Source: RMDB library M2PK50, as collected in RNAgym. This 177-nucleotide RNA was probed chemically with 2A3 and DMS. DMS adducts were read by reverse transcription with MarathonRT. The DMS profile rests on 1,103 reads. The RNA was probed in 150 mM KOAc, 10 mM MgCl2 and 150 mM bicine (pH 8.5) at 24 C.

RNA sequence: GGGAACGACUCGAGUAGAGUCGAAAAGUUCAGUCGUUCGCGACUGAACAAACUGUGAAGCGCCAAAACACAGAAAACAAACGGCAACGCGCGUAUCGCCGAAAACCCUGCAGUUCGCUGCAGGGAACUAUGAAGUCCAGUUCGCUGGACUUCAUAGAAAAGAAACAACAACAACAAC
Reactivity to 2A3 in 0.01 (KOAc 150mM, MgCl2 10mM, bicine 150mM(pH8.5), 24C), signal-to-noise 2, nucleotides 027 to 126: g030u020u000c000a000g010u000c010g000u030u060c230g050c010g120a000c000u000g010a000a000c000a000a000a030c010u000g010u020g040a080a030g080c050g070c100c030a060a050a140a000c040a000c000a030g130a070a090a010a020c090a050a100a020c010g030g010c030a040a020c060g060c010g000c010g090u070a070u200c070g000c010c010g030a070a060a070a110c000c010c000u010g000c000a020g010u060u110c140g020c140u000g000c000a000g000g000g010a000a010
Reactivity to DMS in 0.01 (KOAc 150mM, MgCl2 10mM, bicine 150mM(pH8.5), 24C), signal-to-noise 2, nucleotides 027 to 126: g020u000u000c000a000g000u000c000g070u000u010c160g040c030g020a000c000u010g020a010a000c000a070a070a090c010u000g010u010g000a130a170g020c150g060c050c050a050a070a070a170c000a020c020a030g000a080a090a040a120c150a060a100a110c040g010g020c040a050a090c120g030c100g010c160g000u000a090u000c140g020c000c000g010a110a080a110a110c000c010c000u000g000c000a010g000u010u010c140g010c010u000g000c000a010g010g000g000a010a010